[RMDB]
RNA sequence: GGGAACGACUCGAGUAGAGUCGAAAAGAUAUGGAAUCAAGUAGCCGCUCGCUAUGAAGCCACUGGAGGAUAUAUCGGAAACGAUAUAUUGAAGGUGGUGGAGCGAUGCUACUUGAUUCCUAAGUCACCGUACUACAAUCUUCGGAUUGUAGUACGGAAAAGAAACAACAACAACAAC
Reactivity to DMS in 0.01 (KOAc 150mM, MgCl2 10mM, bicine 150mM(pH8.5), 24C), signal-to-noise 1, nucleotides 027 to 126: g000a010u000a300u020g010g000a000a020u000c000a000a040g020u000a000g000c000c180g000c030u000c000g020c040u010a250u010g000a160a300g020c020c010a000c000u000g000g020a300g000g000a010u020a010u000a000u000c010g020g020a090a130a280c000g000a020u010a010u000a000u010u010g000a270a190g000g000u000g000g020u000g000g010a030g000c000g000a060u020g020c020u000a020c000u040u000g030a000u000u000c000c000u000a000a050g000u000c020a190
This 177-nucleotide RNA was probed chemically with DMS. The RNA was probed in 150 mM KOAc, 10 mM MgCl2 and 150 mM bicine (pH 8.5) at 24 C. For DMS, 830 sequencing reads were counted. DMS adducts were read by reverse transcription with MarathonRT.